[RMDB]
RNA sequence: GGGAACGACUCGAGUAGAGUCGAAAAGACCGAAGCGAGGAGGAAAGCAAAGAAAGCAACGGGGCUAGCGAGUGGAUGUUCCUCCCCCCGAAGGUCCCGAGUGAGGCUUAUCCCGGGGAUCGGCCUCUUACAUGGUUGUUCGCAACCAUGAAAAGAAACAACAACAACAAC
Reactivity to DMS in 0.01 (KOAc 150mM, MgCl2 10mM, bicine 150mM(pH8.5), 24C), signal-to-noise 9, nucleotides 027 to 129: g000a100c010c010g000a110a050g030c140g040a050g000g010a030g040g000a020a020a030g000c200a070a060a050g030a070a090a070g040c040a080a100c070g000g000g000g010c060u010a070g020c050g000a020g040u030g000g000a100u050g000u010u010c020c010u030c010c010c000c000c020c020g000a050a060g010g000u000c000c000c030g010a090g040u000g010a050g000g000c050u000u010a080u010c020c020c070g020g010g010g020a040u010c040g000g000c030c030u010c000u010u030a080
Reactivity to 2A3 in 0.01 (KOAc 150mM, MgCl2 10mM, bicine 150mM(pH8.5), 24C), signal-to-noise 9, nucleotides 027 to 129: g040a010c000c010g000a030a000g040c020g030a020g000g000a010g010g010a060a040a000g060c080a050a030a090g080a060a080a000g050c020a040a070c050g010g000g030g010c020u040a030g070c020g040a010g010u090g050g050a090u150g050u060u040c010c000u020c000c000c000c010c000c000g030a050a020g020g000u020c000c010c010g010a030g060u170g010a010g010g000c000u030u030a020u050c010c030c060g060g020g020g000a030u050c040g020g000c000c000u020c020u010u020a050